Structure probing data (2A3 and DMS) for a 177-nucleotide construct.
Reactivities are given for positions 27 through 126.

RNA sequence: GGGAACGACUCGAGUAGAGUCGAAAAAAGUACCCGUGCGCACCGGCGCCACGGGCGUGCACCACGCGCUCGGGGAUGCGCUCGUGGUCGAAGUGGGUGAUCUUCUCGCGGAAGAGGAAGUCUUCCACGUACAUAGGGCAUUCGUGCCCUAUGUACGAAAAGAAACAACAACAACAAC
Reactivity to 2A3 in 0.01 (KOAc 150mM, MgCl2 10mM, bicine 150mM(pH8.5), 24C), signal-to-noise 3, nucleotides 027 to 126: a000a000g070u080a030c020c000c040g030u070g040c060g000c020a030c040c030g080g000c050g000c020c010a000c000g020g000g000c000g010u030g030c090a040c060c000a070c070g080c000g000c030u100c040g020g010g010g000a070u070g010c000g000c010u030c020g030u070g010g030u060c040g020a090a010g050u110g050g050g000u040g070a080u060c080u060u000c020u030c030g070c110g040g000a030a030g010a020g080g150a110a030g080u000c000u010u000c010c000a020
Reactivity to DMS in 0.01 (KOAc 150mM, MgCl2 10mM, bicine 150mM(pH8.5), 24C), signal-to-noise 4, nucleotides 027 to 126: a070a050g020u010a090c010c010c030g000u010g020c050g020c020a090c050c070g000g030c200g000c030c000a040c020g000g010g030c010g020u000g010c300a160c120c150a110c060g030c080g010c040u000c020g000g000g010g020a070u000g020c020g010c000u000c070g000u000g010g010u000c030g020a120a100g020u000g010g010g020u000g000a070u010c050u010u000c020u000c040g030c110g000g000a030a050g000a030g020g010a090a120g030u000c020u010u000c000c010a260
About this RNA: Source: RMDB library OK2TST, as collected in RNAgym. Conditions: 150 mM KOAc, 10 mM MgCl2 and 150 mM bicine (pH 8.5), 24 C. Values are in units of 0.01, from 0 to 300, in steps of 10. For DMS, 3,625 sequencing reads were counted.